[RMDB]
The record gives the reactivity of an RNA of 177 nucleotides to DMS and 2A3. Conditions: 150 mM KOAc, 10 mM MgCl2 and 150 mM bicine (pH 8.5), 24 C. It was measured as part of the RMDB library OK1LIB. For 2A3, 2,280 sequencing reads were counted.

RNA sequence: GGGAACGACUCGAGUAGAGUCGAAAAUGGACAGAUUGUUGCAAUUGGAGAAGGGGAUGAUAAAGCAGCAAUUGAUAAUGAUACGACAAAUAAAAUUCAAGUGAUUGAUGCUAAAGGUCAUCAUGUAAUCACCAAGGGUGUUCGCACCCUUGGUGAUAAAAGAAACAACAACAACAAC
Reactivity to DMS in 0.01 (KOAc 150mM, MgCl2 10mM, bicine 150mM(pH8.5), 24C), signal-to-noise 2, nucleotides 027 to 126: u020g010g050a180c070a050g000a130u010u020g020u000u000g010c020a160a120u010u050g000g000a090g020a100a100g000g000g000g000a050u020g050a070u000a140a090a060g000c000a000g000c000a020a070u000u000g020a060u040a040a050u030g000a100u020a100c130g000a050c220a060a070a100u000a020a010a010a060u000u010c020a070a230g030u050g000a070u030u020g000a040u010g020c060u000a050a020a030g020g000u010c000a020u000c030a050u010g020u040a080
Reactivity to 2A3 in 0.01 (KOAc 150mM, MgCl2 10mM, bicine 150mM(pH8.5), 24C), signal-to-noise 3, nucleotides 027 to 126: u100g060g080a040c050a110g120a130u050u070g000u010u000g010c080a100a130u060u120g020g020a140g030a090a090g100g000g000g000a000u100g040a040u030a040a110a000g000c050a000g000c000a010a010u020u020g040a030u100a190a040u080g040a010u020a120c180g070a010c160a040a160a000u140a040a110a050a050u100u120c070a060a000g020u020g130a040u040u000g000a000u000g030c070u090a010a140a000g120g010u040c000a000u000c010a010u090g050u160a110